The record gives the reactivity of an RNA of 177 nucleotides to 2A3.
RNA sequence: GGGAACGACUCGAGUAGAGUCGAAAACACGAACAUUGCUGUCCAGCUCGUCAGGCUGAUGGAGGCUGAGGGGGUCAUUGGACCACAACACUUGGAACAGCUACCUAGAAAAACCAAGAUAGCUGUCGCGAUGCCGUAGGUUCGCCUACGGCAUCGCAAAAGAAACAACAACAACAAC
Reactivity to 2A3 in 0.01 (KOAc 150mM, MgCl2 10mM, bicine 150mM(pH8.5), 24C), signal-to-noise 1, nucleotides 027 to 126: c000a010c000g070a000a010c070a200u270u300g000c010u010g010u010c030c070a070g000c000u000c000g050u030c100a000g010g000c100u050g000a010u240g170g000a000g040g000c120u100g000a000g000g000g000g000g000u020c000a090u000u110g030g010a030c050c000a070c000a040a040c070a030c030u000u130g040g040a010a000c000a000g000c000u120a030c000c000u070a000g250a120a120a000a000a000c020c140a010a030g000a230u040a000g000c000u000g000u010c090

The data come from the RNA Mapping Database (RMDB), library OK1LIB. For 2A3 the reverse transcriptase was SuperScript II with manganese. The 2A3 profile rests on 450 reads.